[RMDB]
RNA sequence: GGGAACGACUCGAGUAGAGUCGAAAAGUAAAUAAACGGCACCUAUAAGGUGGUGCCGAACCAGCGUGACCUACCAACACGGAACGAGCAGUCUGGUAUGACUGCAAACCUAAGGUAAACAAAAAAAGAAUACAUCUCACUUCGGUGAGAUGUAUUCAAAAGAAACAACAACAACAAC
Reactivity to DMS in 0.01 (KOAc 150mM, MgCl2 10mM, bicine 150mM(pH8.5), 24C), signal-to-noise 2, nucleotides 027 to 126: g000u030a040a050a080u000a050a250a200c000g000g010c010a000c000c000u010a170u020a090a110g050g010u000g000g040u000g010c000c000g040a070a060c090c110a120g000c070g000u000g000a130c040c010u000a030c040c000a140a100c030a020c010g000g010a110a050c190g000a110g000c000a000g000u010c000u010g000g020u000a050u000g010a020c000u000g000c030a010a020a020c010c050u000a060a090g000g000u000a020a090a170c100a030a000a030a110a090a100a130
Reactivity to 2A3 in 0.01 (KOAc 150mM, MgCl2 10mM, bicine 150mM(pH8.5), 24C), signal-to-noise 2, nucleotides 027 to 126: g000u050a000a060a190u130a070a110a020c010g000g000c000a000c000c020u100a110u020a300a110g220g050u080g040g000u000g000c030c000g010a020a000c000c010a010g020c030g050u050g040a060c000c000u010a020c010c010a070a010c010a010c030g000g080a100a000c060g030a040g000c000a020g010u000c000u110g120g190u260a190u250g010a000c000u000g010c010a000a050a010c010c000u070a050a050g030g000u020a120a160a000c090a040a100a030a000a000a000a020